[RMDB]
RNA sequence: GGGAACGACUCGAGUAGAGUCGAAAAACUGUCACUCUAUAUGUCUAAUUUAUCGUCAACUCUGCAAAAAGAAAAUAGGAAGAAGAAAAUAGGCGGAUAAGAGUAUAUAGAGAAAUGAUUUAUUCUACCUUCCUAAUUGCUUCGGCAAUUAGGAAGGAAAAGAAACAACAACAACAAC
Reactivity to 2A3 in 0.01 (KOAc 150mM, MgCl2 10mM, bicine 150mM(pH8.5), 24C), signal-to-noise 2, nucleotides 027 to 126: a000c010u010g000u120c010a050c010u010c000u040a000u010a000u170g210u020c000u000a060a240u010u000u070a110u070c010g000u000c020a040a080c020u000c060u090g060c070a020a000a000a300a040g070a150a250a040a000u200a020g130g040a060a000g040a080a000g010a110a070a080a040u220a050g000g000c050g010g030a000u010a010a030g000a000g000u000a000u000a000u000a020g020a000g050a000a000a040u040g090a000u130u080u140a160u100u000c000u000a060
Notes: Structure probing data (2A3) for a 177-nucleotide construct. The reactions ran in a buffer of 150 mM KOAc, 10 mM MgCl2 and 150 mM bicine (pH 8.5), at 24 C.